[RMDB]
RNA sequence: GGGAACGACUCGAGUAGAGUCGAAAAAUGAAGUGAUAUUUCAUGGUGAGUUUGAAGAUCACAUUCUUUGUUCUUAUAUUUCAGUUAGUGAAUAGUUACUGAUAAACUCAGAUAUCUUUGCAAGUUACAAGAUGCAGUAUUUCGAUACUGCAUCUUGAAAAGAAACAACAACAACAAC
Reactivity to DMS in 0.01 (KOAc 150mM, MgCl2 10mM, bicine 150mM(pH8.5), 24C), signal-to-noise 5, nucleotides 027 to 126: a010u010g010a020a040g020u000g000a020u000a040u010u000u000c010a040u000g010g010u010g020a100g010u010u000u000g000a030a010g010a020u000c010a010c030a140u000u000c010u000u010u000g010u000u000c010u000u000a100u010a110u010u000u000c030a070g010u000u010a070g020u010g000a070a070u000a090g000u000u000a050c030u000g010a040u000a050a050a080c110u000c030a030g020a110u010a060u000c040u000u000u000g020c140a090a100g010u010u010a150
Reactivity to 2A3 in 0.01 (KOAc 150mM, MgCl2 10mM, bicine 150mM(pH8.5), 24C), signal-to-noise 4, nucleotides 027 to 126: a010u080g020a040a000g010u000g020a020u060a130u140u080u030c040a040u080g190g040u110g100a140g060u050u030u080g020a000a000g010a020u000c000a020c050a180u010u010c000u000u030u080g000u030u030c020u040u110a130u030a100u270u090u070c010a030g010u030u140a040g030u040g080a070a030u070a090g070u040u050a060c020u010g010a030u090a080a100a020c030u020c010a020g040a150u090a080u060c050u030u050u070g010c030a140a010g100u040u040a100
An RNA of 177 nucleotides, treated with DMS and 2A3 and read out base by base. For 2A3 the reverse transcriptase was SuperScript II with manganese. Conditions: 150 mM KOAc, 10 mM MgCl2 and 150 mM bicine (pH 8.5), 24 C. For 2A3, 2,876 sequencing reads were counted.